[RMDB]
RNA sequence: GGGAACGACUCGAGUAGAGUCGAAAAUACAAGAUUCGUCUUGUAAAAAAGAUAUGGAGGAGUUGUCAGAAUCGAACUACGCAUUUCGAUCGGAAACGAUGUGCGCGAUUCUUGGAUUUACUCCUCCUAAGUCAAAAAAGCGUACUUCGGUACGCAAGGGGAAUAGAUUCUUCGGAAUCUAUUCCCCAAAAGAAACAACAACAACAAC
Reactivity to 2A3 in 0.01 (KOAc 150mM, MgCl2 10mM, bicine 150mM(pH8.5), 24C), signal-to-noise 1, nucleotides 027 to 156: u010a000c000a000a000g000a010u060u130c120g040u060c100u000u000g040u130a000a040a160a000a000a120g050a020u110a010u040g000g000a000g020g000a000g000u000u020g010u050c000a000g000a000a000u020c010g030a030a070c190u300a060c110g000c020a050u090u010u000c060g070a120u060c150g180g080a060a300a030c070g000a020u020g000u000g010c040g000c000g020a000u000u000c000u000u050g060g000a040u160u090u000a000c000u000c000c000u000c000c000u000a000a000g000u020c010a000a000a000a000a300a000g040c120g060u220a050c010u070u120c230g060g000u000a000c000g000c000a020a050
Annotation: Source: RMDB library RNAMAK, as collected in RNAgym. Structure probing data (2A3) for a 207-nucleotide construct. Values cover nucleotides 27 to 156.